This 207-nucleotide RNA was probed chemically with 2A3 and DMS.
Conditions: 150 mM KOAc, 10 mM MgCl2 and 150 mM bicine (pH 8.5), 24 C.
RNA sequence: GGGAACGACUCGAGUAGAGUCGAAAAGAAGCUGCCAUACAUUUUGAACAAAAUCCCCACCCACUACGUCCAGUUAACCAAUUUAGCCUGGGACCCCAAUGGCUGCUGUCUCUAAGGCCCCUUUAAGAAGCACCUUUAUUGGUGUCAGGUAUGCAGGGUAUCAGCAUAACUUCGGUUAUGCUGAUACAAAAGAAACAACAACAACAAC
Reactivity to 2A3 in 0.01 (KOAc 150mM, MgCl2 10mM, bicine 150mM(pH8.5), 24C), signal-to-noise 1, nucleotides 027 to 156: g030a040a000g030c040u050g000c030c010a000u050a100c000a050u120u140u160u300g050a120a040c040a080a080a030a080u110c010c000c000c010a030c000c030c010a030c020u100a010c030g070u000c000c030a010g020u010u050a120a030c010c020a070a070u120u070u120a050g020c010c010u010g020g030g060a030c000c010c000c020a040a040u010g020g000c000u010g000c030u030g100u060c000u000c010u100a010a070g020g010c000c020c020c030u040u150u040a140a030g030a010a020g050c010a020c000c000u090u220u040a110u250u230g000g020u000g020u040c000a030g040g070u110a070u090g040c020a010g000g000
Reactivity to DMS in 0.01 (KOAc 150mM, MgCl2 10mM, bicine 150mM(pH8.5), 24C), signal-to-noise 1, nucleotides 027 to 156: g000a040a130g040c070u010g020c030c030a160u020a110c030a180u000u000u000u000g020a110a160c070a070a040a150a150u010c040c010c020c040a120c020c000c010a050c090u010a020c060g000u010c030c020a130g000u000u020a030a080c040c030a100a100u000u020u000a070g000c020c000u010g020g020g020a100c010c000c020c040a020a090u010g000g000c010u000g030c020u000g010u030c010u000c020u010a090a100g030g020c010c020c020c080u000u050u010a100a100g020a130a230g000c010a000c000c000u010u000u010a230u060u000g020g040u000g000u000c070a000g040g020u000a070u000g000c090a080g000g040
For 2A3, 609 sequencing reads were counted. Source: RMDB library OK3TST, as collected in RNAgym.